RNA sequence: GGGAACGACUCGAGUAGAGUCGAAAAAGUCCGCCAUGACUUGCUGGUUUGGACUGUGAGAGUGGUGGUUGGGUGUCUCAAGUAUCCUCUGGGGGUGUCCGUGUCCGUUCCGGGGGAAGAAGGGUGUAGGAUCACAUUAUUUCGAUAAUGUGAUCCUAAAAGAAACAACAACAACAAC
Reactivity to 2A3 in 0.01 (KOAc 150mM, MgCl2 10mM, bicine 150mM(pH8.5), 24C), signal-to-noise 6, nucleotides 027 to 126: a000g020u020c010c000g000c040c000a080u190g090a230c070u110u150g020c050u060g020g090u070u150u270g030g020a030c000u010g060u110g030a080g000a010g030u140g120g030u080g020g010u190u030g010g000g010u050g040u000c030u000c070a010a020g030u030a040u010c000c020u020c020u030g000g010g010g000g000u070g030u010c030c010g050u100g040u030c010c010g070u120u020c000c010g010g000g020g010g020a020a020g040a010a030g000g030g000u050g080u040
Reactivity to DMS in 0.01 (KOAc 150mM, MgCl2 10mM, bicine 150mM(pH8.5), 24C), signal-to-noise 4, nucleotides 027 to 126: a040g020u000c000c020g010c020c010a030u050g020a120c100u020u010g020c100u000g000g000u000u020u020g030g010a020c010u020g000u020g000a100g000a210g000u040g000g010u040g000g010u040u010g000g010g000u010g000u010c030u020c060a110a080g010u030a080u010c020c010u000c030u010g010g010g010g010g020u010g000u010c040c060g010u010g000u010c020c030g030u010u000c010c010g010g010g010g010g010a020a050g010a090a070g000g000g000u010g010u010
An RNA of 177 nucleotides, treated with 2A3 and DMS and read out base by base. Conditions: 150 mM KOAc, 10 mM MgCl2 and 150 mM bicine (pH 8.5), 24 C. 2A3 is a SHAPE reagent: it acylates the 2'-hydroxyl of flexible nucleotides of all four kinds.